[RMDB]
RNA sequence: GGGAACGACUCGAGUAGAGUCGAAAACGUCUGUUCGCAGACGCUCUAAUCCUAAGUCGAAGCAUCGAUCGUCCUGAAUGAGCGAGGAUCUAUCGGAAACGAUAGGGAGCUCGCGGACGGGAGCUUCGAUAUGGACUCCUGCGCACUUCGGUGCGAAUAGAUAAACAUCCUUCGGGAUGUUUAUCUAAAAAGAAACAACAACAACAAC
Reactivity to 2A3 in 0.01 (KOAc 150mM, MgCl2 10mM, bicine 150mM(pH8.5), 24C), signal-to-noise 9, nucleotides 027 to 156: c010g000u000c000u010g060u050u090c270g020c120a000g000a000c000g000c030u040c040u090a070a060u020c010c000u040a140a030g020u000c000g010a010a000g010c030a300u120c040g180a170u070c010g020u010c000c040u270g200a300a290u300g000a070g000c020g040a280g010g020a000u000c000u000a000u000c000g030g050a120a040a070c010g000a000u000a000g020g000g000a020g030c000u000c010g020c020g000g000a000c000g010g000g010a010g000c000u000u000c000g000a000u000a010u030g010g010a020c020u030c020c020u090g040c030g000c020a000c010u040u110c300g100g000u000g000c000g000a030a050
Reactivity to DMS in 0.01 (KOAc 150mM, MgCl2 10mM, bicine 150mM(pH8.5), 24C), signal-to-noise 3, nucleotides 027 to 156: c010g030u000c000u010g000u000u000c280g070c000a030g020a040c020g020c010u010c040u000a150a120u000c010c020u000a090a300g010u000c010g000a090a060g020c000a190u000c060g000a110u010c020g020u000c000c020u000g020a090a110u010g010a050g040c000g010a130g010g000a100u010c010u000a010u000c010g000g010a170a170a170c000g020a030u000a010g000g010g000a160g000c010u000c000g050c300g000g000a050c020g010g010g010a050g000c000u000u000c010g010a020u000a120u000g000g010a050c090u000c020c010u010g020c030g050c030a040c020u010u010c180g020g000u000g000c000g000a070a140
This 207-nucleotide RNA was probed chemically with 2A3 and DMS.
The RNA was probed in 150 mM KOAc, 10 mM MgCl2 and 150 mM bicine (pH 8.5) at 24 C.
For 2A3 the reverse transcriptase was SuperScript II with manganese.
The data come from the RNA Mapping Database (RMDB), library RNAMAK.
DMS adducts were read by reverse transcription with MarathonRT.